[RMDB]
RNA sequence: GGGAACGACUCGAGUAGAGUCGAAAACGAACGGUUGUCGGAUGUGAAAACACCGCAGGACAGGCUGCGGUGUUUUCUGGACGAUGGUGCGACGGUCAGAAAGUCGGGACCGUGAUCGGCUCGAUUGGCGAAUAAAAUCUUUCGAGAUUUUAUUCGCAAAAGAAACAACAACAACAAC
Reactivity to DMS in 0.01 (KOAc 150mM, MgCl2 10mM, bicine 150mM(pH8.5), 24C), signal-to-noise 2, nucleotides 027 to 126: c030g000a070a070c050g010g020u000u010g020u000c020g010g000a180u010g020u000g000a010a000a000a010c000a010c010c000g030c000a000g010g000a200c270a130g010g000c020u000g010c000g000g010u000g000u000u000u000u000c000u000g000g000a080c000g000a060u010g020g020u000g000c020g020a090c030g000g000u000c150a140g000a090a070a090g000u000c030g000g010g010a080c000c020g000u010g000a100u010c040g000g010c050u010c010g020a100u010u010g000